[RMDB]
RNA sequence: GGGAACGACUCGAGUAGAGUCGAAAAGUGUUAUGUGCAAUGUAGUCGAUAGACCUUGAGGGAGCGGUUGUGCGUACGAAGCUUUAGGUAAGCUAAGGCCGAUAGGGGGCGGCUAUCGCGUACGGGAGCGACCUCAAGCAUUGGGAAGCCGCCCUGGGUAUAUAUAAAAGUUCGCUUUUAUAUAUACAAAAGAAACAACAACAACAAC
Reactivity to DMS in 0.01 (KOAc 150mM, MgCl2 10mM, bicine 150mM(pH8.5), 24C), signal-to-noise 1, nucleotides 027 to 156: g000u000g010u000u020a110u000g050u000g000c010a060a000u000g030u000a080g000u000c060g030a200u000a110g010a060c030c040u000u000g010a090g020g000g010a300g020c050g010g020u000u000g000u040g050c040g050u000a010c020g010a120a060g020c000u000u000u000a050g000g000u000a070a170g010c010u010a010a060g000g000c030c010g020a080u000a070g000g010g000g000g010c010g030g000c000u000a040u000c020g000c030g080u000a030c000g030g000g010a270g000c000g000a150c020c000u000c010a000a040g010c030a070u000u020g010g000g010a160a090g030c010c010g040c010c000c000u000g000g020